[RMDB]
Chemical mapping of a 207-nucleotide RNA with DMS and 2A3. DMS adducts were read by reverse transcription with MarathonRT. Source: RMDB library M2RFPK, as collected in RNAgym. Conditions: 150 mM KOAc, 10 mM MgCl2 and 150 mM bicine (pH 8.5), 24 C. Values are in units of 0.01, from 0 to 300, in steps of 10. For DMS, 5,233 sequencing reads were counted.
RNA sequence: GGGAACGACUCGAGUAGAGUCGAAAAACGGUGCGGAAGUUUGCGCUUCCGUGAAACGCGAAAAUCGGACGGUGGCUGCAAGUCGCAUCGCAAAACCGCGGCAAGUGGAGUUAGCGAGAGGAGGCUGAAACCAUCCAACACUUCGGUGUUGGAUGAAGAUAGUAUACCGGUUCGCCGGUAUACUAUCAAAAGAAACAACAACAACAAC
Reactivity to DMS in 0.01 (KOAc 150mM, MgCl2 10mM, bicine 150mM(pH8.5), 24C), signal-to-noise 2, nucleotides 027 to 156: a000c030g000g010u010g010c000g000g010a040a090g000u000u000u000g020c220g010c010u000u010c000c020g000u000g030a060a070a090c010g010c000g010a080a080a150a100u000c020g030g000a030c040g020g020u000g000g040c010u010g030c030a060a060g050u000c040g000c000a110u010c020g000c030a060a050a140a100c040c030g020c010g010g020c070a090a140g050u010g010g040a080g030u000u000a090g000c060g000a070g020a110g000g000a070g040g000c030u000g000a120a050a090c120c010a000u000c000c000a000a000c000a020c000u000u000c300g050g010u000g010u000u000g000g000a000u000g010a030a080
Reactivity to 2A3 in 0.01 (KOAc 150mM, MgCl2 10mM, bicine 150mM(pH8.5), 24C), signal-to-noise 4, nucleotides 027 to 156: a000c030g010g000u050g000c010g050g040a080a100g090u030u070u030g030c030g000c010u010u000c000c000g000u000g020a090a070a010c040g030c010g090a080a040a010a130u170c020g040g000a000c020g040g000u020g030g020c070u140g000c100a020a030g030u040c010g010c010a010u000c000g000c010a070a080a000a010c030c030g010c020g040g010c070a100a050g020u080g040g030a060g000u080u100a020g050c040g030a030g010a020g050g030a010g010g000c020u030g020a060a020a020c020c000a000u000c000c000a000a000c000a000c010u060u110c230g090g000u000g000u000u000g000g000a000u000g000a010a000